[RMDB]
RNA sequence: GGGAACGACUCGAGUAGAGUCGAAAAUGGUGUUAAGUGGAAUAAGUGGAAAAAUAUACAUAUAUGUACAGGGGGCUACAUAUAUGUAUAUGCCCCCUCGUGGUAGUAUAAGUAGGUAUAAGGUGGACCUCGUAAUAGUAUUCGUACUAUUACGAGGAAAAGAAACAACAACAACAAC
Reactivity to DMS in 0.01 (KOAc 150mM, MgCl2 10mM, bicine 150mM(pH8.5), 24C), signal-to-noise 5, nucleotides 027 to 126: u010g000g020u010g010u010u010a060a100g030u000g010g000a080a060u030a060a110g030u010g010g010a020a060a050a100a040u000a030u010a000c000a040u000a020u010a010u010g000u010a050c100a140g010g010g000g000g020c150u000a010c030a010u010a050u010a030u010g000u000a020u020a010u000g010c060c010c010c020c000u000c020g010u020g000g010u000a040g010u010a030u020a000a100g000u000a040g010g020u030a040u020a040a070g010g010u000g000g010a230
Reactivity to 2A3 in 0.01 (KOAc 150mM, MgCl2 10mM, bicine 150mM(pH8.5), 24C), signal-to-noise 4, nucleotides 027 to 126: u100g030g010u050g010u100u100a110a080g050u060g080g020a080a080u090a150a050g020u100g050g040a040a050a010a100a000u050a000u010a020c000a000u040a000u000a000u060g030u060a020c070a090g000g000g110g020g000c010u000a000c000a000u060a000u020a020u040g000u010a000u010a000u020g000c000c000c000c010c000u010c010g010u030g010g040u040a040g030u030a090u010a140a100g060u080a020g060g000u040a110u020a110a040g030g000u040g020g020a040